Chemical mapping of a 170-nucleotide RNA with 2A3 and DMS. The reactions ran in a buffer of 150 mM KOAc, 10 mM MgCl2 and 150 mM bicine (pH 8.5), at 24 C. The data come from the RNA Mapping Database (RMDB), library 15KLIB. The DMS profile rests on 15,230 reads.

[RMDB]
RNA sequence: GGGAACGACUCGAGUAGAGUCGAAAAGCCGAAGGGUUGAGACGCACCCACAGACGGGAGCCUCCAGGAGGGUUUGAGGAGAACUCACCUCCAGAGGACCCCUUCAGCGAACAGAGGAGUCUCUACCGUGCCGGCUAGUUCGCUAGCCGGAAAAGAAACAACAACAACAAC
Reactivity to 2A3 in 0.01 (KOAc 150mM, MgCl2 10mM, bicine 150mM(pH8.5), 24C), signal-to-noise 5, nucleotides 027 to 129: g060c010c010g040a160a160g120g010g000u030u040g020a000g000a030c030g020c110a140c010c020c000a050c060a040g060a000c020g040g000g000a060g030c000c000u000c030c020a110g010g000a030g050g030g030u070u150u300g040a030g020g070a120g050a170a070c010u000c000a040c000c000u000c010c010a000g000a000g000g000a010c000c000c000c000u040u040c020a050g010c020g070a040a030c020a040g080a080g070g000a040g030u020c000u000c000u010a020c000c020g070u060g000
Reactivity to DMS in 0.01 (KOAc 150mM, MgCl2 10mM, bicine 150mM(pH8.5), 24C), signal-to-noise 4, nucleotides 027 to 129: g040c040c020g040a220a070g040g020g030u040u030g020a030g040a000c040g000c060a140c040c010c010a100c150a140g000a050c090g000g000g000a120g020c020c040u020c020c030a230g000g000a030g040g040g020u050u070u050g020a030g030g030a170g000a100a200c000u000c000a120c000c000u030c000c000a200g020a000g000g000a060c000c020c020c000u040u040c000a050g030c090g020a070a030c120a010g030a160g020g010a180g010u040c010u030c010u020a060c030c030g050u000g040